[RMDB]
RNA sequence: GGGAACGACUCGAGUAGAGUCGAAAACUCAUUCGAUAAGAGCCAGGACCAGGCCAUGGCGGUUACGGCGUUGAUGCUGCUGGAAGAUUUGGGCGUAGAGGAGGAUCUCCUGACCCUCAUCGAGGCGACCUACCUCAGUCUUCGGACUGAGGUAGGUAAAAGAAACAACAACAACAAC
Reactivity to DMS in 0.01 (KOAc 150mM, MgCl2 10mM, bicine 150mM(pH8.5), 24C), signal-to-noise 1, nucleotides 027 to 126: c010u010c040a160u000u020c090g000a110u000a040a110g000a130g020c030c030a080g000g010a100c060c050a110g010g010c030c040a040u000g010g030c040g000g000u000u000a110c070g000g020c060g010u020u000g020a070u000g010c040u000g050c010u000g000g020a100a110g000a110u000u010u000g020g000g000c010g030u000a110g000a100g020g020a050g000g000a070u020c020u020c020c110u000g000a090c000c000c000u010c040a070u000c030g000a120g000g020c110g010

An RNA of 177 nucleotides, treated with DMS and read out base by base. Source: RMDB library OK2TST, as collected in RNAgym. For DMS the reverse transcriptase was MarathonRT. The RNA was probed in 150 mM KOAc, 10 mM MgCl2 and 150 mM bicine (pH 8.5) at 24 C.